Structure probing data (DMS and 2A3) for a 170-nucleotide construct. Reactivities are given for positions 27 through 129. The reactions ran in a buffer of 150 mM KOAc, 10 mM MgCl2 and 150 mM bicine (pH 8.5), at 24 C.
RNA sequence: GGGAACGACUCGAGUAGAGUCGAAAACACUCGAGGAGUGGAAGGCGGGGAGACGGGGAUCCCGGGCUUACCCACGGGAACUGCUGGGUUCCCCUGAUGUCCAGUCCCUCCCCGUUCCUGGAGAAGGGCACUAUCCAGUUCGCUGGAUAGAAAAGAAACAACAACAACAAC
Reactivity to DMS in 0.01 (KOAc 150mM, MgCl2 10mM, bicine 150mM(pH8.5), 24C), signal-to-noise 7, nucleotides 027 to 129: c060a030c020u020c000g010a040g000g000a070g040u050g000g000a040a040g030g020c020g000g030g020g020a000g020a250c290g000g030g020g010a020u000c040c040c030g000g000g000c050u020u020a140c030c030c030a090c260g000g000g020a030a080c080u030g030c060u010g020g030g040u000u000c000c000c010c030u000g020a040u020g030u010c010c010a000g030u050c030c040c000u000c000c000c010c000g010u010u010c000c020u000g000g000a070g000a050a050g000g010g050c080a160
Reactivity to 2A3 in 0.01 (KOAc 150mM, MgCl2 10mM, bicine 150mM(pH8.5), 24C), signal-to-noise 9, nucleotides 027 to 129: c030a010c010u020c020g040a020g020g020a060g020u230g050g040a060a030g030g000c030g010g010g010g000a030g020a010c030g010g000g000g000a010u020c010c010c000g040g010g000c040u060u160a170c000c000c020a040c130g020g000g010a040a040c080u130g030c030u060g040g020g000u020u010c000c000c000c000u020g040a050u080g150u040c010c010a020g080u080c020c000c000u010c010c000c000c000g010u020u020c010c000u020g020g010a070g020a060a060g020g010g010c040a010
The DMS profile rests on 75,559 reads.